Chemical mapping of a 177-nucleotide RNA with 2A3 and DMS. For DMS the reverse transcriptase was MarathonRT. For 2A3 the reverse transcriptase was SuperScript II with manganese. It was measured as part of the RMDB library M2PK90.
RNA sequence: GGGAACGACUCGAGUAGAGUCGAAAAUUUAAGAGCGUAGAUGUCUCUGUCACGAUACGAGAAAGUGACUCUCGUGUACUACUGACGAAUGAGACAGAGACAUUUAUGCUCAGUGUCAGUCAAGGAACUGAUCGCAAUAGUUCGCUAUUGCGAUCAGAAAAGAAACAACAACAACAAC
Reactivity to 2A3 in 0.01 (KOAc 150mM, MgCl2 10mM, bicine 150mM(pH8.5), 24C), signal-to-noise 2, nucleotides 027 to 126: u200u160u110a120a030g010a000g000c020g000u000a000g000a040u000g000u000c000u000c010u000g000u000c000a010c050g060a040u030a040c000g000a020g010a030a110a100g300u170g230a070c020u000c000u000c010g050u010g010u060a120c060u020a040c030u070g140a050c080g070a090a160u230g000a060g000a050c000a000g000a030g020a000c010a000u000u000u010a010u010g000c000u000c020a000g000u000g020u030c020a030g000u020c060a090a120g110g010a060a170
Reactivity to DMS in 0.01 (KOAc 150mM, MgCl2 10mM, bicine 150mM(pH8.5), 24C), signal-to-noise 2, nucleotides 027 to 126: u010u000u000a080a050g000a030g010c000g020u020a020g000a010u010g000u000c000u000c000u030g010u000c000a100c140g000a040u000a010c000g030a020g000a040a100a120g000u000g010a190c140u000c030u000c040g050u020g020u000a080c120u010a100c120u000g020a100c180g000a100a050u000g030a130g000a040c000a000g000a020g020a000c010a010u000u000u000a020u000g010c000u000c000a030g020u000g000u000c040a050g000u000c050a130a100g020g000a090a100